[RMDB]
RNA sequence: GGGAACGACUCGAGUAGAGUCGAAAAUAACGAUACGAUGUGUAAACGUCUGGGUGCUUCUGGGGUAGUGAAACUGAACAAACAGACUAUUCAGGUGAUUGUUGGCGCGAAAGCAGAAUCCAUCGGCUGCUAGUACAGUCUUCGGACUGUACUAGCAAAAAGAAACAACAACAACAAC
Reactivity to DMS in 0.01 (KOAc 150mM, MgCl2 10mM, bicine 150mM(pH8.5), 24C), signal-to-noise 1, nucleotides 027 to 126: u000a050a080c020g050a100u000a080c050g010a050u000g000u000g000u030a060a170a120c140g010u000c030u000g020g000g000u000g000c160u000u000c030u000g000g010g000g020u000a030g000u020g080a080a090a050c060u010g000a070a060c050a060a040a120c060a080g000a050c020u000a160u000u000c070a050g010g010u010g010a100u000u000g020u000u000g010g000c090g000c060g010a050a050a140g030c050a110g020a020a080u000c020c030a030u010c080g010g030c100